An RNA of 207 nucleotides, treated with 2A3 and read out base by base.
2A3 adducts were read by reverse transcription with SuperScript II with manganese.
High 2A3 reactivity points to a flexible backbone, as in loops and unpaired stretches.
Reactivities are given for positions 27 through 156.
The RNA was probed in 150 mM KOAc, 10 mM MgCl2 and 150 mM bicine (pH 8.5) at 24 C.
The data come from the RNA Mapping Database (RMDB), library RNAMAK.
[RMDB]
RNA sequence: GGGAACGACUCGAGUAGAGUCGAAAACGCUGGGAAAGGAGAUCUCGAUAAGGGAGGCUCUACCUGAAGCGCGCACGGGUAGAGCCAUCGAUCUUAUACGAGAUCGUCAAUGAAAUACUUUCCUGUGCUGAAGCGCGCACGGCAACCGAAAGGUGCGGCCAUUAUUUUCCUUCGGGAAAAUAAUGGCAAAAGAAACAACAACAACAAC
Reactivity to 2A3 in 0.01 (KOAc 150mM, MgCl2 10mM, bicine 150mM(pH8.5), 24C), signal-to-noise 1, nucleotides 027 to 156: c080g010c010u050g030g000g000a000a000a000g000g010a110g000a020u000c000u000c020g000a000u010a000a000g010g000g000a000g000g000c000u010c000u000a010c020c010u060g020a210a030g020c000g010c000g000c000a010c020g000g000g000u000a000g010a020g000c000c010a040u230c010g000a000u010c010u000u010a010u020a080c000g000a000g000a000u000c000g000u000c000a020a180u170g180a040a040a060u090a000c000u000u000u000c000c000u070g080u100g000c050u120g060a140a000g000c020g000c000g000c000a000c030g070g000c000a070a220c000c000g070a090a000a070g070g030u010g000c030g050